[RMDB]
RNA sequence: GGGAACGACUCGAGUAGAGUCGAAAAUGGUGCAACUCUUAUUAGUCACUAAUCCAAAGCAAGUAUAGGAGAACAGGUUUUUAACUAUUUUUAGGCAGAUAAAAAAUAGUAUUUGACAGUCUAACACAAAAGGCAUUGCCGUUCGCGGCAAUGCCAACCUAUACCUAACGUUCGCGUUAGGUAUAGGAAAAGAAACAACAACAACAAC
Reactivity to 2A3 in 0.01 (KOAc 150mM, MgCl2 10mM, bicine 150mM(pH8.5), 24C), signal-to-noise 3, nucleotides 027 to 156: u090g010g000u020g010c020a040a060c040u030c030u140u120a150u100u130a180g080u110c020a040c060u080a090a050u040c030c020a070a050a020g020c050a040a030g040u080a050u070a120g060g030a050g020a070a040c040a090g000g070u010u010u010u070u060a040a020c000u010a010u040u010u030u030u030a050g010g030c030a010g070a150u140a070a070a000a000a000a000u020a010g030u030a100u160u030u100g070a020c030a010g020u040c070u130a130a030c060a000c040a130a110a010a000g010g000c000a000u000u000g010c000c010g020u040u040c280g020c010g040g010c000a000a000u010g000c000c000a000a000
Reactivity to DMS in 0.01 (KOAc 150mM, MgCl2 10mM, bicine 150mM(pH8.5), 24C), signal-to-noise 1, nucleotides 027 to 156: u000g050g050u010g030c010a120a090c030u010c010u010u000a070u010u000a080g000u010c030a060c010u010a110a140u000c060c010a040a110a110g000c040a100a140g000u010a050u010a080g010g000a100g010a110a110c020a100g030g000u000u010u000u000u000a110a030c000u010a010u010u000u000u010u000a070g010g030c090a130g000a080u000a000a010a030a040a040a010u000a010g020u000a160u010u010u010g010a160c020a130g010u000c080u020a050a140c020a100c120a020a050a060a160g010g000c000a020u010u010g030c000c000g000u000u000c300g040c020g000g000c030a000a000u010g000c000c010a010a000
Chemical mapping of a 207-nucleotide RNA with 2A3 and DMS. The 2A3 profile rests on 1,733 reads. Source: RMDB library M2RFPK, as collected in RNAgym. Conditions: 150 mM KOAc, 10 mM MgCl2 and 150 mM bicine (pH 8.5), 24 C. For DMS the reverse transcriptase was MarathonRT. Reactivities are given for positions 27 through 156. For DMS, 1,871 sequencing reads were counted.